Structure probing data (2A3) for a 177-nucleotide construct. For 2A3 the reverse transcriptase was SuperScript II with manganese. The data come from the RNA Mapping Database (RMDB), library RFM100. For 2A3, 418 sequencing reads were counted. The reactions ran in a buffer of 150 mM KOAc, 10 mM MgCl2 and 150 mM bicine (pH 8.5), at 24 C.

[RMDB]
RNA sequence: GGGAACGACUCGAGUAGAGUCGAAAAACGCACGGCUGUACGCAGCCGUGCGAAGCGCGAUGAACUCUUUACCAUCUUUCGGGGCAUAACACUCUUGAUGAUAACAUACCCAUUUGCUGAGCGCUAACCCGUCAGGCUUUUUCGAAAGCCUGACGGGAAAAGAAACAACAACAACAAC
Reactivity to 2A3 in 0.01 (KOAc 150mM, MgCl2 10mM, bicine 150mM(pH8.5), 24C), signal-to-noise 1, nucleotides 027 to 126: a000c000g050c000a000c000g020g000c000u000g040u060a000c300g000c120a000g000c000c000g000u000g050c000g020a000a000g010c040g000c000g070a010u020g050a040a030c040u010c010u060u010u050a070c000c000a000u080c000u000u150u210c040g000g000g060g000c030a190u150a150a130c230a050c030u020c000u050u040g150a070u060g000a060u140a130a080c070a030u120a060c000c000c050a180u210u110u120g020c010u020g000a010g030c010g000c000u020a150a170